Description:
Source: RMDB libraries RFM100 and RFMREP, as collected in RNAgym. An RNA of 177 nucleotides, treated with DMS and 2A3 and read out base by base.

RNA sequence: GGGAACGACUCGAGUAGAGUCGAAAACGUAGACCUUGCUUGACUCUUGUCUGUGGCCAAGCAAGGGGGACAGAGUAUGCGAGAGUAAUUGGAGUUCAUGCAAGUUCUAACCAGCUUACUCAGUAGCUCAUGUGGCAUUAUUCGUAAUGCCACAUGAAAAAGAAACAACAACAACAAC
Reactivity to DMS in 0.01 (KOAc 150mM, MgCl2 10mM, bicine 150mM(pH8.5), 24C), signal-to-noise 7, nucleotides 027 to 126: c080g000u020a110g010a080c010c000u000u000g000c000u010u000g010a040c010u010c040u000u010g010u010c190u000g010u020g000g000c010c010a010a010g010c010a010a000g010g000g010g000g000a070c080a150g000a080g020u020a060u010g000c000g000a180g000a050g020u000a060a050u030u000g000g010a080g000u000u000c040a060u020g010c300a080a090g010u010u000c030u000a100a100c030c010a070g000c170u000u000a020c000u000c020a140g010u010a090g010c070
Reactivity to 2A3 in 0.01 (KOAc 150mM, MgCl2 10mM, bicine 150mM(pH8.5), 24C), signal-to-noise 9, nucleotides 027 to 126: c040g030u060a020g080a090c000c000u000u000g000c000u000u000g010a010c000u020c010u080u100g080u080c110u100g060u110g020g000c010c000a010a000g000c000a010a010g010g000g000g000g010a030c040a070g080a010g090u120a100u160g030c050g020a160g000a000g120u030a040a030u030u030g030g010a040g010u030u030c050a060u300g120c090a190a040g000u000u000c040u060a090a110c020c000a000g010c020u010u010a020c000u000c020a030g040u060a010g000c010
The RNA was probed in 150 mM KOAc, 10 mM MgCl2 and 150 mM bicine (pH 8.5) at 24 C. Reactivities are rounded to 0.1 and cut off at 0 and 3.